[RMDB]
RNA sequence: GGGAACGACUCGAGUAGAGUCGAAAAUAUCCCAGUCGGCGCUAUUUUAUAUCCGUGUAUGGCGUUGCUGGGACCGGCAUGCACUGCCAUGCCGGGCGGUGCAUCAAGGCCUAGCGUCGGCUAGAAAAGUCUGAGGACGAUUCGUCGUUCUCGGGCUAAAAGAAACAACAACAACAAC
Reactivity to DMS in 0.01 (KOAc 150mM, MgCl2 10mM, bicine 150mM(pH8.5), 24C), signal-to-noise 1, nucleotides 027 to 126: u140a080u000c000c000c000a020g000u000c000g020g000c000g000c000u000a010u000u010u000u000a300u040a070u130c080c080g020u010g020u010a030u010g000g000c060g000u000u000g000c010u000g000g000g000a040c030c010g000g000c040a030u010g010c000a110c140u010g000c100c000a070u000g010c040c100g000g000g000c060g000g000u020g000c000a010u010c110a190a110g000g020c180c120u000a070g040c050g060u010c000g010g000c010u030a130g000a060a090a180
Reactivity to 2A3 in 0.01 (KOAc 150mM, MgCl2 10mM, bicine 150mM(pH8.5), 24C), signal-to-noise 2, nucleotides 027 to 126: u100a030u000c000c000c000a000g000u000c010g000g000c000g000c000u000a030u050u090u030u020a180u080a050u140c030c040g050u040g060u100a110u120g050g000c040g020u010u050g000c010u020g000g030g030a010c000c000g000g000c020a000u010g000c000a030c300u120g030c100c000a020u040g050c000c000g000g000g000c010g010g010u080g000c000a010u020c060a120a060g170g000c000c000u000a000g000c000g000u010c000g000g000c000u000a010g060a000a050a000